[RMDB]
RNA sequence: GGGAACGACUCGAGUAGAGUCGAAAAGGACAUCGGCCAGGGCGCGCUGGUGCAUCCGCAUAGCGCCUAUCUGGAGUAUGCACUGGAUGCUGAUGGCACGGUGGCCAUGGACGUGACCACCACGCAAGUUCUAUCGGCAUUUCGAUGCCGAUAGAACAAAAGAAACAACAACAACAAC
Reactivity to DMS in 0.01 (KOAc 150mM, MgCl2 10mM, bicine 150mM(pH8.5), 24C), signal-to-noise 2, nucleotides 027 to 126: g010g000a080c040a010u010c020g020g000c020c020a030g020g000g020c260g010c080g020c010u000g000g010u020g000c010a040u000c100c090g040c110a070u000a030g020c100g000c060c070u000a070u010c040u000g020g000a160g010u010a030u000g010c040a090c110u000g030g010a050u010g000c020u010g000a170u000g000g000c020a080c020g000g030u000g010g000c000c000a070u030g020g030a110c140g020u000g010a080c000c020a070c080c010a080c160g000c130a110a110
Reactivity to 2A3 in 0.01 (KOAc 150mM, MgCl2 10mM, bicine 150mM(pH8.5), 24C), signal-to-noise 2, nucleotides 027 to 126: g020g020a030c000a040u050c080g020g070c030c010a010g040g030g020c060g000c030g030c030u000g090g020u020g040c000a020u000c030c020g000c010a030u050a040g090c080g000c030c000u050a130u110c070u130g020g010a030g030u060a040u070g010c020a000c050u070g030g000a040u060g000c010u020g030a120u080g030g060c030a020c180g000g050u020g010g050c000c010a000u020g080g010a020c060g010u040g030a040c000c030a050c020c020a030c060g070c030a130a110
Background:
Chemical mapping of a 177-nucleotide RNA with DMS and 2A3. Conditions: 150 mM KOAc, 10 mM MgCl2 and 150 mM bicine (pH 8.5), 24 C. Reactivities are given for positions 27 through 126. DMS adducts were read by reverse transcription with MarathonRT. 2A3 adducts were read by reverse transcription with SuperScript II with manganese. It was measured as part of the RMDB library OK2TRN.